[RMDB]
RNA sequence: GGGAACGACUCGAGUAGAGUCGAAAAGAUUUACGGCGGGAAAAGUCCCGGGUGCGCGCAGAUGUCCCGGGUGCGGCACCGACCGAAAGGCGCCGAAACGGCACCGACCGAAACCGCCGGAAAGAAAAGCUAUAAUAGGGUUCGCCCUAUUAUAGCUAAAAGAAACAACAACAACAAC
Reactivity to DMS in 0.01 (KOAc 150mM, MgCl2 10mM, bicine 150mM(pH8.5), 24C), signal-to-noise 3, nucleotides 027 to 126: g010a180u000u010u010a070c010g000g000c000g010g010g000a100a110a170a120g020u000c010c050c020g010g000g000u000g030c040g010c090g020c230a160g010a150u000g020u000c000c000c020g010g000g040u000g000c000g010g000c000a050c050c020g010a140c080c170g000a060a160a150g010g010c010g010c000c020g010a040a080a210c050g000g020c020a060c110c100g000a080c020c010g010a070a100a200c020c010g010c010c000g010g000a010a030a070g010a120a070a110
Reactivity to 2A3 in 0.01 (KOAc 150mM, MgCl2 10mM, bicine 150mM(pH8.5), 24C), signal-to-noise 1, nucleotides 027 to 126: g030a000u000u080u180a020c010g000g000c000g000g000g120a040a150a000a030g060u050c020c010c010g010g010g000u110g010c220g000c010g030c150a050g130a290u130g030u020c000c010c000g010g020g000u000g000c000g000g000c010a010c010c000g030a060c000c050g060a110a010a000g000g000c010g000c000c000g030a110a160a040c010g010g010c020a020c070c080g090a110c030c010g040a140a080a050c000c000g020c000c000g000g010a030a030a020g010a000a140a000
The data come from the RNA Mapping Database (RMDB), library OK2TRN. This 177-nucleotide RNA was probed chemically with DMS and 2A3. The RNA was probed in 150 mM KOAc, 10 mM MgCl2 and 150 mM bicine (pH 8.5) at 24 C. For 2A3 the reverse transcriptase was SuperScript II with manganese.